[RMDB]
RNA sequence: GGGAACGACUCGAGUAGAGUCGAAAAGCUCAUUCUCGGAGAGGGCGGACGGUCCUGAGAACUCUUAUCUUCCUGCUUAGAAGAGGAGUCUCCUGGACGCUUCCGCCCGCUCGGGAUGGGCCUCAGUGACCAUGUGCGUUCGCGCACAUGAAAAGAAACAACAACAACAAC
Reactivity to DMS in 0.01 (KOAc 150mM, MgCl2 10mM, bicine 150mM(pH8.5), 24C), signal-to-noise 5, nucleotides 027 to 129: g020c020u000c000a060u020u010c040u060c000g040g040a040g030a080g000g000g000c000g000g060a000c150g010g000u030c030c000u030g010a100g000a080a070c020u010c020u030u050a240u050c010u040u010c020c110u030g050c250u050u040a110g020a020a040g020a040g050g000a000g000u030c070u020c040c120u000g000g000a050c020g030c050u010u000c000c000g040c000c000c000g000c030u010c000g020g000g030a010u000g000g010g010c040c030u030c000a120g030u000g050a050c060
Reactivity to 2A3 in 0.01 (KOAc 150mM, MgCl2 10mM, bicine 150mM(pH8.5), 24C), signal-to-noise 9, nucleotides 027 to 129: g000c010u000c000a030u200u050c090u050c080g070g020a020g000a010g010g000g010c010g010g000a020c030g010g010u010c000c000u040g000a050g020a160a070c000u010c010u050u150a110u100c010u010u030c040c070u110g210c110u240u240a050g000a000a010g010a010g000g010a000g010u000c020u000c020c030u020g000g000a010c020g060c080u030u000c000c000g000c000c000c000g000c010u000c000g000g000g000a000u010g000g000g000c000c000u030c030a090g060u110g070a050c030